Chemical mapping of a 170-nucleotide RNA with DMS and 2A3. The 2A3 profile rests on 11,723 reads. The data come from the RNA Mapping Database (RMDB), library 15KLIB. Conditions: 150 mM KOAc, 10 mM MgCl2 and 150 mM bicine (pH 8.5), 24 C.
[RMDB]
RNA sequence: GGGAACGACUCGAGUAGAGUCGAAAACAACUGUUAUCUUGCCACUGCAUUGUUAACACUCCAACAAAUAGAGUUGAAGUUUAAUCGACCUGCUCUACAAAGGGCUGGUGAAGCUGCUAACUUUUGUAUACAGAAAUCUUCGGAUUUCUGAAAAGAAACAACAACAACAAC
Reactivity to DMS in 0.01 (KOAc 150mM, MgCl2 10mM, bicine 150mM(pH8.5), 24C), signal-to-noise 7, nucleotides 027 to 129: c050a110a100c140u030g000u000u000a070u040c040u040u050g030c000c290a120c170u060g030c070a030u070u000g110u040u010a020a080c080a070c100u040c040c020a080a080c120a040a160a120u090a040g000a070g020u050u030g010a030a040g010u000u010u020a010a010u080c090g000a050c020c090u020g030c020u020c030u030a140c270a090a070a040g020g030g000c060u000g050g030u030g040a040a040g030c050u050g030c110u020a020a040c020u010u030u010u060g060u000a000u040a170
Reactivity to 2A3 in 0.01 (KOAc 150mM, MgCl2 10mM, bicine 150mM(pH8.5), 24C), signal-to-noise 7, nucleotides 027 to 129: c010a010a000c030u040g000u050u030a100u070c050u030u120g030c010c030a130c050u150g020c030a070u090u040g030u030u040a070a030c020a020c070u040c040c020a020a010c040a060a250a070u250a050g090a000g050u010u010g040a030a010g020u000u070u160a090a080u080c010g020a030c010c010u020g010c010u000c000u070a080c070a050a140a060g000g000g000c010u010g000g000u020g020a010a000g030c050u070g010c010u020a010a030c000u060u030u030u040g060u030a120u010a060
Values cover nucleotides 27 to 129.